[RMDB]
RNA sequence: GGGAACGACUCGAGUAGAGUCGAAAACUGGUUUAAGUAGUUGUGGAGCAAUAAUAAAUAAUAAUGAAUGGAUUAGUUUAAAUGUUGGUGGUCGUAUAUUCUCAACUACUAGAUCCACAAUUAUUAGAAGAACAACUCUAUUCGUAGAGUUGUUCUUAAAAGAAACAACAACAACAAC
Reactivity to DMS in 0.01 (KOAc 150mM, MgCl2 10mM, bicine 150mM(pH8.5), 24C), signal-to-noise 4, nucleotides 027 to 126: c000u010g020g000u030u010u020a060a200g000u000a030g020u010u010g010u000g000g000a190g020c100a070a060u030a050a080u040a070a070a090u000a030a020u030a010a010u000g000a120a300u010g010g000a020u000u000a010g010u010u050u050a030a040a050u040g000u000u010g020g020u030g010g020u010c170g010u050a080u020a100u010u020c020u010c020a010a010c020u020a030c020u000a070g010a030u000c000c010a000c080a090a010u000u000a000u010u000a040g010
Reactivity to 2A3 in 0.01 (KOAc 150mM, MgCl2 10mM, bicine 150mM(pH8.5), 24C), signal-to-noise 2, nucleotides 027 to 126: c060u120g040g300u120u250u130a150a080g010u060a070g010u020u040g020u090g060g170a010g080c050a050a100u090a210a010u200a150a080a000u090a010a000u040a000a030u010g040a060a160u050g020g000a000u040u040a000g100u050u000u080a190a150a020u060g000u010u000g050g220u030g030g070u070c030g000u110a090u010a070u300u070c000u030c000a000a020c100u020a000c010u000a000g230a250u000c000c000a000c090a000a000u010u010a000u020u020a080g080
Chemical mapping of a 177-nucleotide RNA with DMS and 2A3. The data come from the RNA Mapping Database (RMDB), library OK1LIB. 2A3 adducts were read by reverse transcription with SuperScript II with manganese. For DMS the reverse transcriptase was MarathonRT. For DMS, 7,444 sequencing reads were counted. High 2A3 reactivity points to a flexible backbone, as in loops and unpaired stretches.